[RMDB]
RNA sequence: GGGAACGACUCGAGUAGAGUCGAAAACCUACUAAUAUAGCUUUUGAACUCUAUGCUAAGCGUGCUGUACGCUCGCAUCCCGAUUUCAAAUUGCUACACAAUUUACAAGCAGACAUUUGCUACAAGUACCUCUCACAUCGUUCGCGAUGUGAGAGGUAAAAGAAACAACAACAACAAC
Reactivity to 2A3 in 0.01 (KOAc 150mM, MgCl2 10mM, bicine 150mM(pH8.5), 24C), signal-to-noise 1, nucleotides 027 to 126: c020c000u000a040c060u060a030a290u200a050u040a110g000c000u000u010u030u000g020a020a000c000u020c000u040a010u040g000c010u040a040a000g030c010g070u010g110c070u240g110u100a000c000g000c010u010c040g000c010a030u030c100c050c010g030a030u040u040u000c000a010a030a030u080u080g040c000u020a010c060a010c000a060a030u080u160u140a050c060a000a000g020c000a010g050a140c090a260u130u120u060g010c020u010a020c010a070a000g080u000